Conditions: 150 mM KOAc, 10 mM MgCl2 and 150 mM bicine (pH 8.5), 24 C. This 177-nucleotide RNA was probed chemically with 2A3 and DMS. 2A3 is a SHAPE reagent: it acylates the 2'-hydroxyl of flexible nucleotides of all four kinds.
RNA sequence: GGGAACGACUCGAGUAGAGUCGAAAAUGAGCGACAAGGAGCUGGAGUCAGAUCCGGCGGCAUGCCUGCUUGCUUCUGCGACUGAGGAGGGCCAGAAGGUUGCGCGCAACUCUGGACAGACGUGGAGGAGUCGAACGGAGUUCGCUCCGUUCGACUCAAAAGAAACAACAACAACAAC
Reactivity to 2A3 in 0.01 (KOAc 150mM, MgCl2 10mM, bicine 150mM(pH8.5), 24C), signal-to-noise 1, nucleotides 027 to 126: u100g010a020g050c020g090a070c020a060a030g110g000a020g060c030u040g020g010a020g080u090c030a030g040a210u010c040c000g040g020c000g040g020c030a020u110g020c010c010u050g070c040u060u060g000c000u060u060c010u030g020c040g040a020c060u050g020a030g040g030a030g020g020g000c010c000a020g000a080a040g110g030u060u040g070c230g000c000g000c030a000a030c020u070c000u040g010g010a030c000a010g040a010c000g030u040g040g020a020g030
Reactivity to DMS in 0.01 (KOAc 150mM, MgCl2 10mM, bicine 150mM(pH8.5), 24C), signal-to-noise 2, nucleotides 027 to 126: u030g020a060g010c030g000a070c050a050a090g000g010a280g010c000u010g000g020a040g020u000c260a090g000a080u000c010c020g040g040c030g000g000c060a070u020g010c010c020u000g020c020u020u000g020c040u030u000c040u000g020c060g010a110c130u010g000a060g020g030a120g020g000g010c030c000a050g010a060a090g000g000u020u000g010c050g050c210g020c070a080a080c040u000c000u000g000g010a120c050a060g010a110c100g000u000g020g000a110g000